An RNA of 177 nucleotides, treated with 2A3 and DMS and read out base by base. For 2A3 the reverse transcriptase was SuperScript II with manganese.
RNA sequence: GGGAACGACUCGAGUAGAGUCGAAAAAUUAGCCGGCCGCGCGCGUAAUAUUACGAUCGAUCGUACGAUAUCGAUGCCGGCUAAUUAUAUAGCGCUAAUUAGCAUCGUAAUUAUACGCGAUAUGCCGAGCCAUCGUAAUAUUCGUAUUACGAUGGCUAAAAGAAACAACAACAACAAC
Reactivity to 2A3 in 0.01 (KOAc 150mM, MgCl2 10mM, bicine 150mM(pH8.5), 24C), signal-to-noise 1, nucleotides 027 to 126: a000u020u040a000g040c050c030g000g000c030c030g130c010g070c000g000c000g080u000a020a050u230a200u300u070a010c010g000a010u010c000g000a010u000c050g000u110a080c030g060a050u020a020u190c010g010a000u050g030c000c000g030g020c000u000a010a010u000u000a010u000a010u000a000g060c050g000c000u040a040a040u030u160a040g150c090a100u050c010g000u010a010a060u140u120a070u020a120c000g010c010g000a020u000a010u100g110c020c020g020
Reactivity to DMS in 0.01 (KOAc 150mM, MgCl2 10mM, bicine 150mM(pH8.5), 24C), signal-to-noise 3, nucleotides 027 to 126: a030u000u000a030g010c070c010g000g020c000c060g060c300g000c110g000c010g010u000a020a260u020a100u010u000a000c010g010a030u000c020g010a020u000c110g020u000a050c130g000a090u010a100u010c010g010a030u000g020c030c030g010g010c000u000a000a000u000u000a040u000a020u000a080g020c030g020c210u000a110a110u000u000a080g030c120a050u000c070g000u000a020a050u010u000a080u020a060c020g020c010g020a020u000a020u000g010c030c040g010
It was measured as part of the RMDB library OK2TRN.